Background
This 177-nucleotide RNA was probed chemically with 2A3. Values cover nucleotides 27 to 126. The data come from the RNA Mapping Database (RMDB), library RFM100. Conditions: 150 mM KOAc, 10 mM MgCl2 and 150 mM bicine (pH 8.5), 24 C.
RNA sequence: GGGAACGACUCGAGUAGAGUCGAAAAGCGAUAGCGGUGAAUUAUUCGUGGUUUUGUCGAUUCGGCAUAGUGGCGAUAACUGAAUGCCGGAUCGGUACUGCAGGUGUUUAAACACACCGUAAAUAAUGAUCGAAGCAAUGUUCGCAUUGCUUCGAUCAAAAGAAACAACAACAACAAC
Reactivity to 2A3 in 0.01 (KOAc 150mM, MgCl2 10mM, bicine 150mM(pH8.5), 24C), signal-to-noise 2, nucleotides 027 to 126: g120c060g090a130u140a080g000c040g000g050u020g050a150a190u190u100a040u000u040c010g050u150g010g040u000u030u010u140g030u010c000g000a000u000u000c000g000g000c000a000u010a010g080u040g050g180c160g140a100u170a120a040c000u030g250a200a020u000g000c000c000g000g000a020u010c000g000g000u010a000c010u040g070c000a000g150g040u090g030u050u040u020a060a030a000c000a000c000a000c080c000g000u000a020a020a020u160a000a070u050